Structure probing data (2A3 and DMS) for a 177-nucleotide construct. Source: RMDB library RFMREP, as collected in RNAgym. The 2A3 profile rests on 2,029 reads. The reactions ran in a buffer of 150 mM KOAc, 10 mM MgCl2 and 150 mM bicine (pH 8.5), at 24 C. For DMS the reverse transcriptase was MarathonRT. Values cover nucleotides 27 to 126. The DMS profile rests on 2,189 reads.
RNA sequence: GGGAACGACUCGAGUAGAGUCGAAAAUGAGCAGAAAGAGUAGCAUGAUAUUUUCUUCAAGGUCUUUACCAACCUUUCAUCGUUCCCUUCUUUGCAAUAACGCUGUUUUGCAAAACCGUGAUAGUGCCUACAAUGUUAGCUUCGGCUAACAUUGUAGAAAAGAAACAACAACAACAAC
Reactivity to 2A3 in 0.01 (KOAc 150mM, MgCl2 10mM, bicine 150mM(pH8.5), 24C), signal-to-noise 3, nucleotides 027 to 126: u050g020a020g070c030a030g100a100a100a010g070a020g020u100a030g050c050a080u070g070a000u050a100u150u110u030u020c010u080u050c030a000a030g020g000u040c000u040u100u070a040c020c020a010a010c010c010u050u100u080c030a060u040c010g030u020u000c000c020c000u020u030c010u030u030u010g000c030a010a110u070a110a010c040g060c300u110g030u000u020u010u060g030c020a010a010a050a070c030c020g030u010g040a080u050a180g070u040g020c000
Reactivity to DMS in 0.01 (KOAc 150mM, MgCl2 10mM, bicine 150mM(pH8.5), 24C), signal-to-noise 3, nucleotides 027 to 126: u010g020a080g040c170a100g000a070a050a040g000a110g000u010a120g000c080a030u010g010a070u000a050u000u000u000u010c040u000u000c080a070a070g010g000u010c030u000u000u010a050c150c150a110a030c030c030u000u010u000c080a090u000c020g000u010u000c010c000c000u010u000c090u010u000u000g010c040a020a010u000a040a060c070g020c180u010g010u010u010u000u000g030c100a050a030a030a090c080c170g030u020g000a090u010a110g010u000g010c040